[RMDB]
RNA sequence: GGGAACGACUCGAGUAGAGUCGAAAACACCUUUCGGACCCCUCAGCUCUUGGUCCGUAAGUGGUUAAACUCGAAGGGAAGGGUUUAAUGAGGUGUACCACUCUUUAAUGUCUUCGUCUGUACAUCCAAGGGCGCCCGUUCCAGAGGGUAUUAAGGGCUAGAUAUUUACAUUCGUGUGAGUGUCUAGAAAAGAAACAACAACAACAAC
Reactivity to 2A3 in 0.01 (KOAc 150mM, MgCl2 10mM, bicine 150mM(pH8.5), 24C), signal-to-noise 3, nucleotides 027 to 156: c020a030c000c000u020u050u060c050g020g030a050c020c010c000c020u090c110a050g010c020u010c010u120u060g010g010u020c010c010g010u020a020a020g040u060g050g020u020u070a020a050a010c000u010c010g020a060a040g010g000g020a030a000g010g000g000u010u030u110a040a030u080g030a010g010g000u020g000u010a020c010c020a040c030u060c030u010u130u050a130a060u090g030u030c020u070u040c060g060u000c060u050g020u020a010c000a030u000c020c000a020a010g010g020g000c020g020c000c010c010g030u070u030c000c010a020g010a020g040g000g000u010a010u050u090a040a030g000g000g000
Reactivity to DMS in 0.01 (KOAc 150mM, MgCl2 10mM, bicine 150mM(pH8.5), 24C), signal-to-noise 3, nucleotides 027 to 156: c020a060c020c010u000u000u010c020g040g010a040c010c010c040c060u010c080a190g010c030u000c030u000u000g000g020u000c020c010g010u000a000a050g010u000g010g000u010u000a040a070a050c060u000c010g020a300a130g000g010g010a160a060g010g010g010u000u000u000a060a090u010g010a130g020g020u000g020u010a080c020c070a060c030u000c020u000u000u000a080a070u010g000u000c070u010u000c070g020u000c040u000g010u010a020c040a040u000c010c020a080a130g010g030g040c220g000c020c020c000g000u000u000c030c020a130g000a300g000g010g010u000a050u010u000a080a080g010g010g000